[RMDB]
RNA sequence: GGGAACGACUCGAGUAGAGUCGAAAAGAACUUUGGCCGGCUCGGAAUAGAAUCAGGGGGUGCAAAUUGCCCACUGGCAGAAAGGAUUAUAGCAAAUGCGUACCCUAUUGCAAUACAGCCCGGCCAACAUAGACUACUCUAUUCGUAGAGUAGUCAAACCGACCUUCUUAUUCGUAAGAAGGUCGGUAAAAGAAACAACAACAACAAC
Reactivity to 2A3 in 0.01 (KOAc 150mM, MgCl2 10mM, bicine 150mM(pH8.5), 24C), signal-to-noise 1, nucleotides 027 to 156: g070a120a050c000u000u050u050g000g020c000c000g000g020c040u030c070g030g080a070a030u110a130g030a030a060u220c060a040g000g000g020g000g000u060g000c020a000a090a300u090u050g000c030c030c000a030c050u040g040g000c010a050g090a030a050a010g020g010a110u210u080a060u230a120g010c010a010a040a170u080g000c040g020u130a100c020c010c000u040a080u040u020g080c090a020a010u040a110c030a000g040c000c090c000g000g000c000c000a000a000c000a000u040a040g000a000c000u020a000c000u000c000u000a010u100u030c160g060u090a000g000a000g000u000a000g000u000c000a000a000
An RNA of 207 nucleotides, treated with 2A3 and read out base by base. For 2A3 the reverse transcriptase was SuperScript II with manganese. The 2A3 profile rests on 553 reads. Values cover nucleotides 27 to 156.